[RMDB]
RNA sequence: GGGAACGACUCGAGUAGAGUCGAAAAGUAAGGAUUCGCGACACCCGCCCGGAUCACGUUGACCGAGACGGGUAGGUCGUGCAUGAUCGGUCCGGUAAGCACCUCGUUAGGUGAGGCGGCUACACGACAGAGUUGUGUUCUUCGGAACACAACUCUGAAAAGAAACAACAACAACAAC
Reactivity to DMS in 0.01 (KOAc 150mM, MgCl2 10mM, bicine 150mM(pH8.5), 24C), signal-to-noise 1, nucleotides 027 to 126: g030u010a100a100g000g000a080u020u000c020g000c010g010a030c020a120c020c020c000g000c020c000c020g000g010a160u000c000a130c300g000u030u020g000a050c030c030g020a070g000a080c010g000g010g000u010a000g020g010u000c020g020u000g010c220a030u010g010a100u000c060g020g000u020c010c040g020g000u000a020a040g000c000a200c010c000u000c040g000u020u030a140g030g030u020g020a030g010g000c000g040g000c000u000a040c030a150c150g000a190
Reactivity to 2A3 in 0.01 (KOAc 150mM, MgCl2 10mM, bicine 150mM(pH8.5), 24C), signal-to-noise 1, nucleotides 027 to 126: g030u010a110a000g110g040a060u050u080c010g010c000g030a000c000a010c000c000c040g000c020c000c040g000g030a170u060c030a040c270g230u160u300g030a030c010c010g040a050g010a040c000g010g000g000u060a080g110g000u030c040g000u010g020c000a040u080g010a040u030c050g000g020u020c000c010g040g000u020a020a020g020c010a020c020c000u000c040g080u080u260a170g020g170u140g080a000g010g030c010g000g040c000u010a060c090a000c060g150a000

Chemical mapping of a 177-nucleotide RNA with DMS and 2A3.
Source: RMDB library OK2TST, as collected in RNAgym.
Reactivities are rounded to 0.1 and cut off at 0 and 3.
Conditions: 150 mM KOAc, 10 mM MgCl2 and 150 mM bicine (pH 8.5), 24 C.
High 2A3 reactivity points to a flexible backbone, as in loops and unpaired stretches.